Structure probing data (2A3 and DMS) for a 177-nucleotide construct. For DMS the reverse transcriptase was MarathonRT. Source: RMDB library TTRDEL, as collected in RNAgym.
RNA sequence: GGGAACGACUCGAGUAGAGUCGAAAAGAUAUGGACCCUCCGAUAAGCGUAAACUCGGAAACGAGUUCACGCUUUUGACGGAGGUCCUAAGUCAAAACGAUAUUCUCAGUUCGCUGAGAAUAUCGAAGAUGCGUAACUGGUUCGCCAGUUACGCAUCAAAAGAAACAACAACAACAAC
Reactivity to 2A3 in 0.01 (KOAc 150mM, MgCl2 10mM, bicine 150mM(pH8.5), 24C), signal-to-noise 1, nucleotides 027 to 126: g030a000u090a050u090g010g000a000c140c130c000u050c020c010g090a080u010a050a010g000c010g000u020a030a000a000c010u000c010g030g000a070a050a000c020g020a010g020u050u000c030a010c000g020c000u030u030u000u000g050a040c000g010g020a000g020g000u000c000c010u020a160a070g060u010c050a010a000a080a100c000g000a000u010a010u010u010c010u000c000a020g020u060u110c300g000c120u030g010a030g000a000a000u000a000u010c000g020a010a000
Reactivity to DMS in 0.01 (KOAc 150mM, MgCl2 10mM, bicine 150mM(pH8.5), 24C), signal-to-noise 2, nucleotides 027 to 126: g000a060u000a300u000g010g000a010c080c070c020u000c000c000g000a140u000a040a010g000c000g010u000a050a010a020c000u000c000g000g000a100a120a210c000g000a030g000u000u000c030a010c000g020c010u010u000u000u000g010a230c260g000g010a070g010g010u010c000c000u000a040a100g040u000c050a020a040a140a270c000g000a000u000a000u000u000c000u000c000a000g000u000u020c270g010c010u000g000a010g020a010a010u000a000u010c000g000a020a060